[RMDB]
RNA sequence: GGGAACGACUCGAGUAGAGUCGAAAAGAUAUGGAAUGAUGACCGAUAAGCUGGUGUCGGAAACGACACCCAGCUUUUGACGGGUCAUUCCUAAGUCAAAAGGAUGCCACGUUCGCGUGGCAUCCAAGAUUGCAAAGAACUUCGGUUCUUUGCAAUCAAAAGAAACAACAACAACAAC
Reactivity to DMS in 0.01 (KOAc 150mM, MgCl2 10mM, bicine 150mM(pH8.5), 24C), signal-to-noise 2, nucleotides 027 to 126: g000a020u000a300u000g010g000a010a010u000g010a020u000g000a240c000c000g000a170u000a030a020g020c000u000g010g010u010g010u020c010g000g010a090a070a140c010g020a010c010a000c160c070c050a010g020c000u000u010u000u000g010a100c070g010g000g000u000c000a010u010u010c000c000u010a020a140g010u000c070a070a070a140a140g000g000a010u000g010c020c000a010c000g020u000u020c280g060c010g010u000g000g000c010a000u000c000c010a020a020
An RNA of 177 nucleotides, treated with DMS and read out base by base. The RNA was probed in 150 mM KOAc, 10 mM MgCl2 and 150 mM bicine (pH 8.5) at 24 C. The DMS profile rests on 1,969 reads.